[RMDB]
This 207-nucleotide RNA was probed chemically with DMS and 2A3. Source: RMDB library M2RFPK, as collected in RNAgym. Values cover nucleotides 27 to 156. 2A3 is a SHAPE reagent: it acylates the 2'-hydroxyl of flexible nucleotides of all four kinds. The 2A3 profile rests on 944 reads. DMS adducts were read by reverse transcription with MarathonRT. 2A3 adducts were read by reverse transcription with SuperScript II with manganese.

RNA sequence: GGGAACGACUCGAGUAGAGUCGAAAAUUGGCGAAUGCCUGUGGAUCUACAUUUGUUGCGGGUUCGAGACACGUCAGAGCCCGGCUCUGUAGCUCAAUGGUAGAGCGGUGUAUUCACAUAAACUUGUAAAAGACACGUGCCUUCGGGCACGUGUCAACUUAUCUCGUACGUUCGCGUACGAGAUAAGAAAAGAAACAACAACAACAAC
Reactivity to DMS in 0.01 (KOAc 150mM, MgCl2 10mM, bicine 150mM(pH8.5), 24C), signal-to-noise 1, nucleotides 027 to 156: u000u010g010g030c000g000a030a060u010g020c000c030u000g050u020g050g010a060u000c030u020a060c020a050u020u000u020g000u010u010g000c020g030g050g040u030u000c030g040a170g030a040c050a100c140g000u050c040a150g010a150g050c010c000c000g000g030c010u030c010u030g040u000a200g010c030u000c010a060a120u020g010g020u020a060g000a120g030c010g020g000u000g020u000a080u000u010c040a070c060a080u000a050a070a190c090u020u000g020u000a040a050a100a130g010a040c010a000c020g020u000g000c000c020u000u010c300g020g010g000c000a010c030g000u000g000u010c000a000a020
Reactivity to 2A3 in 0.01 (KOAc 150mM, MgCl2 10mM, bicine 150mM(pH8.5), 24C), signal-to-noise 2, nucleotides 027 to 156: u070u020g020g000c100g060a250a050u240g000c010c010u010g020u040g010g000a000u000c020u070a020c080a100u040u040u150g080u020u110g080c010g000g000g000u020u010c030g020a030g020a120c070a020c130g120u060c010a050g010a010g000c010c010c000g010g000c000u000c000u050g150u120a020g020c020u010c040a080a060u130g090g000u120a040g000a010g040c020g000g000u030g000u010a030u020u100c030a040c000a080u210a100a090a020c030u130u090g070u160a090a080a000a040g000a000c000a000c000g000u000g000c000c000u000u090c130g060g000g110c020a000c000g000u000g000u000c000a000a000